RNA sequence: GGGAACGACUCGAGUAGAGUCGAAAAACAUGGCAGUGACAUACACCGGAAAACCGUAGAGAUACGGUCCGCCUUGUAGUCGGUGUACAGGAGGUGCAAGCCUGUCGUCAGGUAAUGUCGUACGCUGAGAUAUUUUGUUAUUCGUAACAAAAUAUCUAAAAGAAACAACAACAACAAC
Reactivity to DMS in 0.01 (KOAc 150mM, MgCl2 10mM, bicine 150mM(pH8.5), 24C), signal-to-noise 9, nucleotides 027 to 126: a090c050a040u010g000g000c000a040g010u010g000a020c020a090u000a020c030a020c030c010g010g000a050a060a110a050c000c000g000u000a010g000a220g000a190u000a000c000g000g000u000c050c000g010c070c040u010u020g010u020a070g020u010c020g010g010u000g010u010a030c080a060g010g010a070g010g020u010g010c170a080a100g000c010c000u000g000u010c050g010u000c000a060g010g010u000a070a050u010g010u000c010g010u010a070c080g010c020u000g000
Reactivity to 2A3 in 0.01 (KOAc 150mM, MgCl2 10mM, bicine 150mM(pH8.5), 24C), signal-to-noise 6, nucleotides 027 to 126: a000c010a020u020g010g000c010a020g050u000g040a010c000a010u040a010c010a020c010c000g010g010a020a040a010a020c000c000g000u000a000g000a000g000a040u000a000c000g000g010u010c000c000g020c010c000u020u100g070u030a030g020u020c020g000g010u020g000u020a040c010a010g010g020a010g010g060u070g020c030a010a030g020c010c000u010g020u040c030g050u040c000a010g020g010u070a070a020u050g010u010c010g020u020a020c030g000c020u010g000